[RMDB]
RNA sequence: GGGAACGACUCGAGUAGAGUCGAAAAUGCGAGAUCACGCCCGUGCCGCUGUUCGUCGCGACGCCCGCGGCGAGCACGGGCGAGGCGGCCGCGAUCGCCGAGCCGUUCGCGGUGGCGAGCGAGAAGAUAAUUAUUAGUCGUUCGCGACUAAUAAUUAAAAAGAAACAACAACAACAAC
Reactivity to DMS in 0.01 (KOAc 150mM, MgCl2 10mM, bicine 150mM(pH8.5), 24C), signal-to-noise 9, nucleotides 027 to 126: u010g010c020g000a160g000a130u010c070a140c020g010c010c010c010g010u000g010c010c050g020c250u000g010u000u000c020g020u000c010g010c020g010a150c280g010c190c170c020g020c010g010g000c000g000a020g010c000a020c020g010g000g010c000g010a020g020g010c010g000g010c030c020g010c020g000a050u000c010g010c020c060g010a300g010c070c010g010u000u010c070g020c010g010g020u000g010g000c020g000a140g010c020g000a110g000a100a090g000a170
Reactivity to 2A3 in 0.01 (KOAc 150mM, MgCl2 10mM, bicine 150mM(pH8.5), 24C), signal-to-noise 6, nucleotides 027 to 126: u150g000c020g010a120g030a160u140c070a030c110g000c000c000c000g040u190g300c030c000g050c190u020g010u010u010c000g000u010c010g010c010g070a110c080g230c040c120c000g000c010g010g000c000g000a000g000c000a000c000g000g010g000c010g000a020g010g010c020g000g010c010c010g020c010g010a040u020c000g000c040c050g070a040g040c040c000g010u030u050c110g000c010g070g030u070g060g050c030g010a030g010c030g030a050g050a120a030g050a040
The record gives the reactivity of an RNA of 177 nucleotides to DMS and 2A3. The RNA was probed in 150 mM KOAc, 10 mM MgCl2 and 150 mM bicine (pH 8.5) at 24 C. It was measured as part of the RMDB library OK2TRN. For DMS the reverse transcriptase was MarathonRT. For 2A3 the reverse transcriptase was SuperScript II with manganese. Values cover nucleotides 27 to 126. The 2A3 profile rests on 13,833 reads.